Background:
Chemical mapping of a 177-nucleotide RNA with DMS and 2A3. For DMS the reverse transcriptase was MarathonRT. The reactions ran in a buffer of 150 mM KOAc, 10 mM MgCl2 and 150 mM bicine (pH 8.5), at 24 C. The data come from the RNA Mapping Database (RMDB), libraries RFM100 and RFMREP.

RNA sequence: GGGAACGACUCGAGUAGAGUCGAAAAUGCAUGAUACUAUUAACUUGUAGUUAUUUAAUAACUACAAGUCUUUUAUAUUCAUGAACAUAAUACUCCUGGAUGACGUCUUAACCCGACGUCAUCCUCUUUAUUUACACAAAUUCGUUUGUGUAAAUAAAAAAGAAACAACAACAACAAC
Reactivity to DMS in 0.01 (KOAc 150mM, MgCl2 10mM, bicine 150mM(pH8.5), 24C), signal-to-noise 5, nucleotides 027 to 126: u020g010c010a010u000g000a010u000a110c300u010a000u000u000a020a010c000u000u000g000u000a000g000u010u000a010u000u040u020a140a100u000a000a000c000u000a000c000a010a000g000u000c010u000u010u000u000a010u010a110u020u000c000a000u000g010a090a110c030a060u000a070a080u020a150c180u010c000c030u000g000g010a000u000g010a010c000g010u000c000u000u000a100a140c300c270c240g000a000c000g000u000c000a000u000c000c000u010c030u010
Reactivity to 2A3 in 0.01 (KOAc 150mM, MgCl2 10mM, bicine 150mM(pH8.5), 24C), signal-to-noise 9, nucleotides 027 to 126: u040g000c000a000u000g000a000u010a050c050u020a060u030u010a010a000c000u000u000g000u000a000g010u000u020a060u050u300u170a270a180u030a010a010c000u000a000c000a000a000g000u000c000u010u010u000u000a030u010a010u020u080c000a000u010g020a090a020c000a010u180a210a090u060a170c050u030c030c010u000g000g000a000u000g000a000c000g010u000c020u080u080a100a100c030c030c040g000a000c000g000u000c000a000u000c000c000u000c000u000